The record gives the reactivity of an RNA of 177 nucleotides to DMS and 2A3.
Source: RMDB library VIROID, as collected in RNAgym.
2A3 adducts were read by reverse transcription with SuperScript II with manganese.
For DMS, 2,407 sequencing reads were counted.
DMS adducts were read by reverse transcription with MarathonRT.
[RMDB]
RNA sequence: GGGAACGACUCGAGUAGAGUCGAAAAAGUUUUAAGUCGGAAGAAGUUUCUUCCUGACUGAGCCAAACACGGUAAACAAAACCUUUGCUUUUCCCGUAUUCCAUAAUGGACGGGUGUUAUCCUUUUGCACAUGUAGACUGUUCGCAGUCUACAUGUGAAAAGAAACAACAACAACAAC
Reactivity to DMS in 0.01 (KOAc 150mM, MgCl2 10mM, bicine 150mM(pH8.5), 24C), signal-to-noise 4, nucleotides 027 to 126: a030g000u000u000u010u010a090a030g030u000c000g010g000a010a000g010a050a300g010u010u010u020c000u010u000c000c010u010g060a000c000u000g000a100g000c030c040a100a070a110c180a070c220g000g030u010a060a100a080c130a040a050a060a060c030c030u010u000u000g030c180u000u000u000u000c010c000c020g020u010a140u000u010c040c010a160u020a130a100u020g000g010a040c230g000g000g020u000g000u010u000a070u000c080c010u000u000u010u020g000
Reactivity to 2A3 in 0.01 (KOAc 150mM, MgCl2 10mM, bicine 150mM(pH8.5), 24C), signal-to-noise 2, nucleotides 027 to 126: a020g060u070u030u080u100a040a010g010u000c030g000g010a000a010g010a120a040g060u220u300u020c000u000u000c000c010u010g020a000c000u010g040a020g000c010c000a040a300a000c060a040c070g000g020u060a070a160a000c030a030a130a040a110c030c000u030u070u080g070c040u200u130u130u050c020c000c000g000u050a240u110u000c030c000a040u100a300a160u300g010g020a010c040g020g020g090u060g040u050u050a120u130c000c060u020u090u050u300g010